[RMDB]
RNA sequence: GGGAACGACUCGAGUAGAGUCGAAAAGGCGUAUUUUGCCCAGGCGGAGCUCGACCGCCGGUUCAAGCCAUGACGGGGUUCAUCGACGAACACCGCGCCAGGUACGGAGUCGAGCCGAUCUGCAGGGCUCGCCCAAAUCAUUCGUGAUUUGGGCGAGAAAAGAAACAACAACAACAAC
Reactivity to 2A3 in 0.01 (KOAc 150mM, MgCl2 10mM, bicine 150mM(pH8.5), 24C), signal-to-noise 4, nucleotides 027 to 126: g070g000c060g020u160a170u040u170u150u180g040c000c000c000a040g060g050c010g000g000a010g030c010u010c000g010a010c030c120g120c040c000g020g010u100u160c050a080a050g010c000c020a050u070g050a080c000g000g000g000g000u000u000c020a080u180c160g130a140c100g000a020a000c080a050c060c030g080c010g030c030c020a020g000g000u020a040c000g000g010a000g000u010c000g000a000g000c000c000g050a090u020c000u020g000c010a050g010g000g000
Reactivity to DMS in 0.01 (KOAc 150mM, MgCl2 10mM, bicine 150mM(pH8.5), 24C), signal-to-noise 4, nucleotides 027 to 126: g010g000c160g010u030a070u020u010u040u020g000c020c030c030a110g000g010c000g030g010a090g000c010u000c010g000a020c000c140g010c010c010g000g010u000u060c280a110a170g010c020c020a100u000g030a300c000g010g000g000g030u000u000c020a120u020c240g010a150c220g000a000a010c010a030c000c000g010c030g000c120c040a030g010g000u000a090c010g020g020a290g010u000c000g000a010g000c020c130g010a130u010c000u000g000c000a080g010g010g000

The record gives the reactivity of an RNA of 177 nucleotides to 2A3 and DMS. Reactivities are given for positions 27 through 126. In probing experiments dimethyl sulfate is read out at A N1 and C N3, which are open when not base-paired. Conditions: 150 mM KOAc, 10 mM MgCl2 and 150 mM bicine (pH 8.5), 24 C. It was measured as part of the RMDB libraries RFM100 and RFMREP.